[RMDB]
RNA sequence: GGGAACGACUCGAGUAGAGUCGAAAAUCUGUUGACAAGUAAUCGUAAAGUCGAAGUCGGACUACGGUUGCCGCAACAGAAGUCAGAUUGCGUCAAGUCCGACUUGGACUUUUGUAAGAUCUGAUCACUUCACGUUAGUAUUCGUACUGACGUGAAGAAAAGAAACAACAACAACAAC
Reactivity to DMS in 0.01 (KOAc 150mM, MgCl2 10mM, bicine 150mM(pH8.5), 24C), signal-to-noise 9, nucleotides 027 to 126: u000c030u000g000u010u000g010a070c110a090a090g000u000a090a070u000c020g010u000a020a010a020g020u000c000g000a040a040g010u000c030g010g000a020c010u000a110c200g020g010u010u000g010c090c010g000c010a010a010c060a110g000a100a110g000u010c150a080g000a160u000u000g000c050g000u000c040a060a040g000u000c000c000g010a030c060u000u000g000g010a010c000u000u000u000u000g010u010a070a140g000a050u000c030u000g000a120u000c110a120
Reactivity to 2A3 in 0.01 (KOAc 150mM, MgCl2 10mM, bicine 150mM(pH8.5), 24C), signal-to-noise 6, nucleotides 027 to 126: u010c010u010g040u030u060g020a020c030a080a020g030u030a050a040u040c020g010u020a020a000a000g000u000c070g080a020a000g020u010c010g000g000a000c010u050a040c090g110g020u080u030g010c010c000g010c000a010a010c000a020g120a090a000g080u010c030a020g040a290u000u020g010c000g010u010c020a020a000g000u000c000c000g000a020c000u000u020g030g000a000c000u000u010u000u020g060u030a060a020g000a040u000c020u040g040a090u050c030a010